This 207-nucleotide RNA was probed chemically with 2A3.
[RMDB]
RNA sequence: GGGAACGACUCGAGUAGAGUCGAAAACAGGUUGAACUUCGGUUCAACCUGAAAAAAGAUAUGGAUCGUUGGAGGGAGUCCCUUCUCGGAAACGAGAGCGGACAUCGAUCUCCACCGAUCCUAAGUCAAAAAAUGGGUAAGUUUCGACUUACCCAAAGCAUACAACAGACUUCGGUCUGUUGUAUGCAAAAGAAACAACAACAACAAC
Reactivity to 2A3 in 0.01 (KOAc 150mM, MgCl2 10mM, bicine 150mM(pH8.5), 24C), signal-to-noise 1, nucleotides 027 to 156: c000a010g000g010u000u000g000a000a010c040u090u170c300g010g000u000u000c000a000a000c000c000u010g010a010a010a000a000a000a000g000a000u010a000u040g000g000a000u000c000g000u010u000g000g000a000g000g090g060a130g000u030c000c000c000u070u130c000u000c000g020g000a000a000a000c000g000a000g000a000g000c130g000g000a000c010a020u100c110g090a160u040c000u020c000c000a010c030c000g000a000u000c000c000u000a000a000g000u000c020a020a010a010a180a000a020u110g000g000g000u010a010a000g010u020u040u160c230g040a030c020u000u000a000c000c020c030a010a000a020
Values cover nucleotides 27 to 156.
Conditions: 150 mM KOAc, 10 mM MgCl2 and 150 mM bicine (pH 8.5), 24 C.